[RMDB]
RNA sequence: GGGAACGACUCGAGUAGAGUCGAAAAGAGUAUCAGUACUGAAAUGCUCAGGAAAGACGGCUUCUCAUUAUGGUGCAGGUAGGGAAAACCUGGGGUCUGAGCCGUACGGUCACCAGGACCACAGACUGUUUUUCUCACUAGUUCAGAAGGCCAGAUACGAGUGUUUUACUUUCGAGUAAAACACUCGAAAAGAAACAACAACAACAAC
Reactivity to DMS in 0.01 (KOAc 150mM, MgCl2 10mM, bicine 150mM(pH8.5), 24C), signal-to-noise 2, nucleotides 027 to 156: g010a100g020u000a040u000c020a070g010u020a160c080u000g000a060a120a090u010g010c060u000c010a150g010g010a030a120a110g020a080c110g000g000c010u000u000c000u000c020a140u000u000a090u010g010g000u000g030c050a130g020g010u010a070g020g010g000a020a050a020a050c050c010u010g000g000g010g000u020c010u020g010a300g030c000c010g030u000a070c100g020g010u000c020a040c050c060a070g010g000a070c000c010a030c050a070g000a150c100u010g030u000u000u000u000u000c000u030c010a060c040u000a070g000u000u000c050a120g010a060a090g020g000c020c020a080g000a180u000a090
Reactivity to 2A3 in 0.01 (KOAc 150mM, MgCl2 10mM, bicine 150mM(pH8.5), 24C), signal-to-noise 3, nucleotides 027 to 156: g010a000g000u030a020u130c060a050g040u090a080c100u090g040a120a120a080u140g010c020u020c040a010g030g100a090a050a020g040a020c060g010g000c040u060u010c050u020c040a140u070u180a070u210g030g000u030g000c050a040g040g070u120a040g050g030g000a000a030a000a020c020c000u000g000g010g000g010u010c020u010g020a010g020c010c000g090u100a080c110g000g040u050c050a060c080c020a030g000g110a010c000c000a020c010a020g030a030c030u060g040u060u070u000u020u000c030u020c010a020c020u030a030g070u080u020c030a020g020a100a020g090g000c010c040a010g020a040u130a070